[RMDB]
RNA sequence: GGGAACGACUCGAGUAGAGUCGAAAAGCUGAGUAUACGAGGUUAGUUCAUUCUCGUAUGCAUGAUUGGACAAAUUAAAAUCUCAAUUUGGAUCAGGGCCUCCCUCCAGCGACGGCCGAACAUACAAGAAUUGAUAUCCAUUCGUGGAUAUCAAUUCAAAAGAAACAACAACAACAAC
Reactivity to DMS in 0.01 (KOAc 150mM, MgCl2 10mM, bicine 150mM(pH8.5), 24C), signal-to-noise 6, nucleotides 027 to 126: g010c020u000g000a190g030u000a010u000a010c010g000a000g000g010u010u000a120g010u010u010c200a070u010u000c000u000c000g010u000a010u000g010c010a070u000g010a080u010u000g010g000a080c030a020a020a030u000u000a060a070a090a100u010c150u000c110a050a030u000u000u000g000g000a100u000c030a060g010g000g000c020c010u000c010c010c020u000c100c020a020g000c020g000a090c160g000g020c020c030g010a040a040c110a060u010a120c170a050a080
Reactivity to 2A3 in 0.01 (KOAc 150mM, MgCl2 10mM, bicine 150mM(pH8.5), 24C), signal-to-noise 7, nucleotides 027 to 126: g000c010u030g040a010g030u010a000u000a010c000g010a000g020g060u130u130a050g080u220u260c060a050u200u050c020u010c010g000u010a000u010g000c010a050u070g030a070u030u130g030g020a010c010a010a030a040u070u130a080a100a140a280u120c090u020c120a040a050u050u010u040g100g010a140u070c050a060g030g030g020c000c010u000c010c000c000u020c020c010a010g010c000g010a040c030g000g010c010c000g000a020a020c030a020u180a050c050a060a040